[RMDB]
RNA sequence: GGGAACGACUCGAGUAGAGUCGAAAAGAUAUGGAGACGCGAUAAGAAGGUGUCGGAAACGACACACUUCUUUUGACGCGUCCUCCUAAGUCAAAGUAAGCUCGAACCUUCGGGUUCGAGCUUACAAUCGGGUAGAAUGGUUCGCCAUUCUACCCGAAAAAGAAACAACAACAACAAC
Reactivity to DMS in 0.01 (KOAc 150mM, MgCl2 10mM, bicine 150mM(pH8.5), 24C), signal-to-noise 1, nucleotides 027 to 126: g010a020u000a300u010g000g000a030g020a000c000g020c000g000a140u000a000a010g000a000a020g040g010u000g000u000c000g050g010a090a070a140c020g020a000c000a000c010a080c000u000u000c000u000u000u010u000g000a150c050g020c010g010u000c190c010u010c000c000u010a100a100g000u010c070a100a140a140g000u010a010a010g000c000u000c000g000a020a010c000c000u000u030c280g010g010g000u000u010c000g030a000g000c000u000u000a000c000a080a050
This 177-nucleotide RNA was probed chemically with DMS.